[RMDB]
This 177-nucleotide RNA was probed chemically with DMS.
It was measured as part of the RMDB library OK2TST.
DMS adducts were read by reverse transcription with MarathonRT.
RNA sequence: GGGAACGACUCGAGUAGAGUCGAAAAAGUAGGUGAAGCGACCUGGAAAGGUCCGUCACAGAAGGUAACAACCCUGUAGCCGAAACUUCGUUUCCUCCAGAGUGGAUCCUGAGUACGGCGGGACACGCCUUGGGGAGACCUUCGGGUCUCCCCAAGGAAAAGAAACAACAACAACAAC
Reactivity to DMS in 0.01 (KOAc 150mM, MgCl2 10mM, bicine 150mM(pH8.5), 24C), signal-to-noise 2, nucleotides 027 to 126: a080g000u000a120g000g000u000g000a010a020g030c190g000a000c000c010u000g000g060a300a050a000g020g010u000c000c000g000u000c000a240c140a060g010a120a020g020g000u000a040a000c140a020a030c000c010c010u000g000u000a300g020c010c010g010a110a100a130c090u000u010c030g000u000u000u000c020c020u000c080c160a300g040a100g010u000g020g000a070u010c010c010u010g000a160g000u010a080c140g020g020c040g000g010g000a110c180a010c120g000